[RMDB]
RNA sequence: GGGAACGACUCGAGUAGAGUCGAAAACGUCCCGUCAUUGAAGGGAGCCUGGCGACCUAAACGGUCGUGUCAUAUGUAAGCACCAGGUGCCAUCUCCCUGUGGCAAUCGGCGGGCUCGGUAAAUCGGUCAUCGGAUCCGCUUCGGUGGGUCCGAUGAAAAAGAAACAACAACAACAAC
Reactivity to DMS in 0.01 (KOAc 150mM, MgCl2 10mM, bicine 150mM(pH8.5), 24C), signal-to-noise 8, nucleotides 027 to 126: c080g000u020c010c010c010g030u010c020a040u000u010g010a170a040g010g000g000a030g010c290c170u010g000g010c010g020a020c000c010u000a060a140a120c240g000g000u030c070g020u010g000u020c080a130u020a120u040g010u040a120a150g010c060a100c010c040a070g010g010u020g010c030c040a060u040c020u000c000c000c010u010g010u040g020g010c030a030a030u010c140g020g000c030g000g010g000c080u020c040g000g000u020a030a060a100u010c060g010g000
Reactivity to 2A3 in 0.01 (KOAc 150mM, MgCl2 10mM, bicine 150mM(pH8.5), 24C), signal-to-noise 9, nucleotides 027 to 126: c020g050u050c000c000c000g000u000c010a020u010u040g050a040a020g000g010g010a000g010c010c030u020g010g010c020g080a070c000c010u080a140a150a060c140g010g020u030c050g020u040g030u030c030a050u120a080u300g170u210a110a040g030c020a020c020c010a030g060g000u030g040c010c010a090u050c000u010c000c000c000u050g030u040g150g050c000a010a030u030c050g000g000c000g000g010g000c030u040c010g040g020u100a020a030a040u090c050g050g000
Chemical mapping of a 177-nucleotide RNA with DMS and 2A3. Values are in units of 0.01, from 0 to 300, in steps of 10. Conditions: 150 mM KOAc, 10 mM MgCl2 and 150 mM bicine (pH 8.5), 24 C. The 2A3 profile rests on 14,553 reads. In probing experiments dimethyl sulfate is read out at A N1 and C N3, which are open when not base-paired. It was measured as part of the RMDB library OK1LIB. Values cover nucleotides 27 to 126.